An RNA of 177 nucleotides, treated with DMS and 2A3 and read out base by base. For DMS the reverse transcriptase was MarathonRT.

RNA sequence: GGGAACGACUCGAGUAGAGUCGAAAAGAAACAUGAGGGCAGAUCAUGGAAAAUAAAUAAUGCACACUACUGCCAAAAUGUGUGCGAAACACUCGAAGUGUAAAGAGUGGACACUUCUGAAAAGAAAGGGAAAUCUAAUGUUCGCAUUAGAUUUCCCAAAAGAAACAACAACAACAAC
Reactivity to DMS in 0.01 (KOAc 150mM, MgCl2 10mM, bicine 150mM(pH8.5), 24C), signal-to-noise 2, nucleotides 027 to 126: g030a160a220a130c000a020u020g040a120g080g010g000c010a020g000a240u000c010a000u000g000g000a050a050a100a110u040a020a060a100u060a120a140u040g000c000a000c030a000c010u000a090c020u010g000c010c020a040a130a090a080u000g000u000g030u010g030c000g000a050a080a120c130a080c100u000c080g000a020a040g010u050g010u010a000a040a120g040a050g030u040g020g000a070c020a010c040u000u000c000u000g060a060a020a070a150g000a130a150a050
Reactivity to 2A3 in 0.01 (KOAc 150mM, MgCl2 10mM, bicine 150mM(pH8.5), 24C), signal-to-noise 3, nucleotides 027 to 126: g050a000a110a000c010a000u010g010a050g040g060g040c030a000g010a100u060c010a000u010g070g140a040a040a040a130u300a050a070a040u280a070a040u200g010c000a000c000a000c000u180a080c000u040g010c000c000a110a110a040a030u080g010u000g000u000g000c020g030a010a070a010c050a020c020u040c030g000a030a000g030u010g010u160a030a110a040g110a050g040u090g030g020a010c010a000c040u040u020c000u090g060a100a030a020a050g090a040a050a070